[RMDB]
RNA sequence: GGGAACGACUCGAGUAGAGUCGAAAAGGCACCAUUAAGUGAAAGUGUAAGUUCAAAUUUCUCUCCCAGAGCCUGGCGUAAAGAUUUACAGGACGUGUAGCUUGGUCGAAAUAUGGUGUACCAAGUCCUAUACCGGUGCGUUCGCGCACCGGUAUAGAAAAGAAACAACAACAACAAC
Reactivity to 2A3 in 0.01 (KOAc 150mM, MgCl2 10mM, bicine 150mM(pH8.5), 24C), signal-to-noise 2, nucleotides 027 to 126: g030g000c000a000c000c000a010u020u100a060a090g080u060g260a100a000a000g090u090g060u180a080a130g070u040u050c070a090a140a030u000u030u000c000u000c000u000c040c000c020a020g000a020g260c000c100u050g000g040c010g020u110a100a110a070g050a120u050u090u050a170c090a080g020g120a100c090g020u030g030u070a000g000c000u060u030g140g000u120c010g010a000a040a100u230a060u030g000g000u040g000u030a020c000c000a000a030g000u000c000
Reactivity to DMS in 0.01 (KOAc 150mM, MgCl2 10mM, bicine 150mM(pH8.5), 24C), signal-to-noise 2, nucleotides 027 to 126: g040g000c000a080c000c080a010u020u080a120a180g000u020g000a070a060a010g030u000g010u000a170a100g000u000u000c050a130a100a120u040u020u030c000u000c020u000c010c000c060a160g000a030g100c100c010u000g000g040c020g000u020a000a060a050g000a090u000u000u000a120c190a140g040g000a040c080g020u050g060u000a190g000c090u000u000g000g010u020c040g000a100a000a110u050a080u000g000g020u000g100u020a180c020c000a050a010g000u000c140

The data come from the RNA Mapping Database (RMDB), library OK1LIB.
An RNA of 177 nucleotides, treated with 2A3 and DMS and read out base by base.
The 2A3 profile rests on 855 reads.
For DMS the reverse transcriptase was MarathonRT.